Structure probing data (2A3) for a 177-nucleotide construct. The RNA was probed in 150 mM KOAc, 10 mM MgCl2 and 150 mM bicine (pH 8.5) at 24 C.
RNA sequence: GGGAACGACUCGAGUAGAGUCGAAAACGGACACGGAUACCCAGACGGACCAGCCGCCCUCGACGUGCGGGUCGCGGCCGUGGUGACCUGUGUGGACUGCGUAAGGUGGCUGCCGCAGUCACUCGGCCUAUCCCCGGCCGUUCGCGGCCGGGGAUAGAAAAGAAACAACAACAACAAC
Reactivity to 2A3 in 0.01 (KOAc 150mM, MgCl2 10mM, bicine 150mM(pH8.5), 24C), signal-to-noise 1, nucleotides 027 to 126: c070g050g050a050c130a000c110g000g000a050u090a090c020c000c010a000g090a090c040g000g080a160c080c000a000g000c000c000g000c000c010c030u150c090g080a080c020g080u080g010c060g010g000g000u040c100g000c020g030g100c020c000g070u090g040g010u010g020a000c000c010u050g000u000g050u030g070g120a110c010u010g000c080g080u120a120a120g040g020u000g020g000c050u130g050c050c000g000c000a010g000u020c000a070c000u000c010g070g000c000
The 2A3 profile rests on 450 reads.